The record gives the reactivity of an RNA of 177 nucleotides to 2A3 and DMS. Conditions: 150 mM KOAc, 10 mM MgCl2 and 150 mM bicine (pH 8.5), 24 C. DMS adducts were read by reverse transcription with MarathonRT. The data come from the RNA Mapping Database (RMDB), library OK2TRN. The DMS profile rests on 1,281 reads. For 2A3, 1,098 sequencing reads were counted. Reactivities are given for positions 27 through 126.
RNA sequence: GGGAACGACUCGAGUAGAGUCGAAAACACGGCACGACGCCCGACAGCACGCAGCCGACGAGGAGCGCGAGAUAGUCGCCCGUCGCGGGCAGCGCGACGAGGGCGAUAUCGCCCGCGCGCGCGCCGAGGCAUUUAAUGGCUUCGGCCAUUAAAUGCCAAAAGAAACAACAACAACAAC
Reactivity to 2A3 in 0.01 (KOAc 150mM, MgCl2 10mM, bicine 150mM(pH8.5), 24C), signal-to-noise 1, nucleotides 027 to 126: c050a030c000g010g100c060a020c080g150a080c100g090c000c030c000g100a060c120a040g080c030a000c150g050c050a050g000c030c010g070a090c060g030a070g120g030a100g010c010g000c000g010a060g020a100u080a060g200u020c000g000c000c010c020g000u020c030g000c050g020g110g050c080a040g080c000g050c020g020a030c050g060a210g030g030g000c000g000a000u020a000u060c010g050c020c020c010g060c010g000c020g010c010g000c050g010c030c020g010a050
Reactivity to DMS in 0.01 (KOAc 150mM, MgCl2 10mM, bicine 150mM(pH8.5), 24C), signal-to-noise 1, nucleotides 027 to 126: c070a200c120g020g010c020a080c060g010a130c070g000c030c080c000g010a100c200a050g010c040a020c060g000c050a070g030c020c020g000a080c080g000a070g000g000a170g000c040g040c030g000a100g010a060u000a080g000u000c020g020c010c020c010g020u000c010g020c020g010g010g060c210a080g030c010g040c000g010a020c020g000a080g080g000g030c000g000a150u000a010u000c040g030c060c040c040g000c040g000c000g010c000g030c050g000c020c010g000a040